About this RNA: This 177-nucleotide RNA was probed chemically with DMS and 2A3. 2A3 adducts were read by reverse transcription with SuperScript II with manganese. DMS adducts were read by reverse transcription with MarathonRT. Source: RMDB library OK1LIB, as collected in RNAgym.

[RMDB]
RNA sequence: GGGAACGACUCGAGUAGAGUCGAAAAGAAUGUAUGUAAACCGUGUGGCACACAAUGGCUAUUCAGGAAUCGUUCUGAGGAAACAGGUAAAAUGGAAGAAAGCCAAAUCCUUAGCAAACGGAAGAAAAUAGUGCAUGGCAUUCGUGCCAUGCACUAUAAAAGAAACAACAACAACAAC
Reactivity to DMS in 0.01 (KOAc 150mM, MgCl2 10mM, bicine 150mM(pH8.5), 24C), signal-to-noise 1, nucleotides 027 to 126: g070a140a000u040g000u010a080u000g060u000a040a010a140c020c140g060u000g000u000g000g070c000a010c100a000c190a030a040u000g000g000c000u000a140u000u000c000a080g000g000a110a030u000c070g000u000u000c020u000g000a050g000g000a000a060a010c010a290g000g000u030a000a000a000a170u000g030g000a010a030g000a130a120a180g100c000c000a070a030a160u000c000c000u000u000a030g070c180a020a010a010c020g020g010a090a080g000a130a060a010
Reactivity to 2A3 in 0.01 (KOAc 150mM, MgCl2 10mM, bicine 150mM(pH8.5), 24C), signal-to-noise 2, nucleotides 027 to 126: g030a060a100u160g050u190a060u050g160u060a000a030a040c020c010g060u000g000u030g030g080c030a020c010a000c100a090a170u210g170g000c000u050a010u000u030c050a100g020g160a000a070u160c000g000u000u000c000u000g050a020g010g000a140a160a000c010a030g000g020u040a050a060a050a050u090g000g100a050a040g050a010a090a000g000c000c000a000a020a020u000c000c000u000u000a000g020c090a010a010a010c000g080g120a070a000g080a050a180a000